[RMDB]
RNA sequence: GGGAACGACUCGAGUAGAGUCGAAAAGGGGUCUACGAUAGAGCGCAUAAGCUUUUGACGAGCUGAAGCCUCCACGGCUCGAUAAGCUUAUGAACUACGCUUUCGUAGACGGAGGCACCCAAAGAUUAACAAUAACGUUCGCGUUAUUGUUAAUCAAGAUAUAUAGACACUUCGGUGUCUAUAUAUCAAAAGAAACAACAACAACAAC
Reactivity to DMS in 0.01 (KOAc 150mM, MgCl2 10mM, bicine 150mM(pH8.5), 24C), signal-to-noise 3, nucleotides 027 to 156: g000g000g040g030u000c000u000a010c000g010a110u000a080g000a050g040c010g000c010a040u010a040a040g020c010u000u000u030u010g020a300c130g010a030g020c010u010g000a070a160g010c020c010u000c000c020a300c030g000g000c000u000c000g010a080u000a020a030g020c000u000u000a120u000g010a090a180c040u000a080c030g000c000u000u000u000c000g070u000a020g010a030c020g010g010a010g020g040c020a110c030c000c010a110a060a120g000a020u000u000a000a010c000a020a010u000a010a010c030g040u000u010c300g050c040g040u000u000a000u000u000g030u000u010a000a020u010c000a090a140
Reactivity to 2A3 in 0.01 (KOAc 150mM, MgCl2 10mM, bicine 150mM(pH8.5), 24C), signal-to-noise 9, nucleotides 027 to 156: g110g020g030g000u010c010u000a000c000g000a020u080a150g220a010g060c030g000c020a000u010a010a000g000c020u090u190u240u280g190a120c080g000a000g000c000u010g020a090a010g020c000c000u010c000c010a020c010g010g000c000u010c000g050a100u080a300a030g000c000u010u000a010u030g020a040a030c110u190a040c100g000c000u050u060u000c000g000u000a000g000a000c000g000g000a000g000g000c000a020c000c000c010a050a090a020g000a000u000u000a000a000c000a000a000u000a000a000c020g020u040u050c270g010c000g130u000u020a000u000u000g000u000u000a000a000u000c000a000a010
Chemical mapping of a 207-nucleotide RNA with DMS and 2A3. For DMS the reverse transcriptase was MarathonRT. The reactions ran in a buffer of 150 mM KOAc, 10 mM MgCl2 and 150 mM bicine (pH 8.5), at 24 C.